[RMDB]
RNA sequence: GGGAACGACUCGAGUAGAGUCGAAAAGGGGUCGUUUGCGCGUACGACGAAGUAUUAGACAUGGUCUGAAGCCUCCACGGACCAACAGCUAAUACAGAGUACGCGUGCAAACGACGGAGGCACCCAAAACCUGACCCUUGUUCGCAAGGGUCAGGAAGCUAUAAGCGAGGUUCGCCUCGCUUAUAGCAAAAGAAACAACAACAACAAC
Reactivity to DMS in 0.01 (KOAc 150mM, MgCl2 10mM, bicine 150mM(pH8.5), 24C), signal-to-noise 1, nucleotides 027 to 156: g010g000g030g040u000c000g040u000u010u000g030c010g050c000g080u000a010c050g040a220c080g010a240a250g010u000a010u000u000a030g000a040c060a300u010g060g000u000c000u000g030a080a200g010c000c000u000c040c020a300c020g000g000a030c000c010a120a110c040a200g000c000u010a000a060u000a010c010a040g010a300g040u000a060c060g000c030g040u010g000c090a000a030a010c000g000a060c000g000g020a040g000g040c010a120c020c000c000a000a040a100a180c020c020u030g000a060c000c000c000u000u000g040u000u020c300g050c000a060a010g000g000g020u000c000a000g010g000a020a040
Reactivity to 2A3 in 0.01 (KOAc 150mM, MgCl2 10mM, bicine 150mM(pH8.5), 24C), signal-to-noise 3, nucleotides 027 to 156: g070g000g000g000u000c010g010u000u000u030g030c000g040c010g010u070a100c090g130a040c030g030a250a000g000u010a020u000u010a020g080a150c210a250u280g000g000u030c020u010g050a050a020g030c000c000u030c020c010a050c040g020g000a010c030c010a040a060c080a060g090c000u010a000a000u000a000c000a000g000a000g030u040a170c050g000c010g010u010g000c010a000a000a000c000g000a000c020g010g000a000g000g000c010a050c010c000c020a030a040a020a090c000c010u000g000a000c000c010c010u010u000g030u020u070c140g000c130a000a000g000g000g000u000c000a000g000g000a000a000
The record gives the reactivity of an RNA of 207 nucleotides to DMS and 2A3. For DMS the reverse transcriptase was MarathonRT. Source: RMDB library RNAMAK, as collected in RNAgym. Reactivities are given for positions 27 through 156. Conditions: 150 mM KOAc, 10 mM MgCl2 and 150 mM bicine (pH 8.5), 24 C.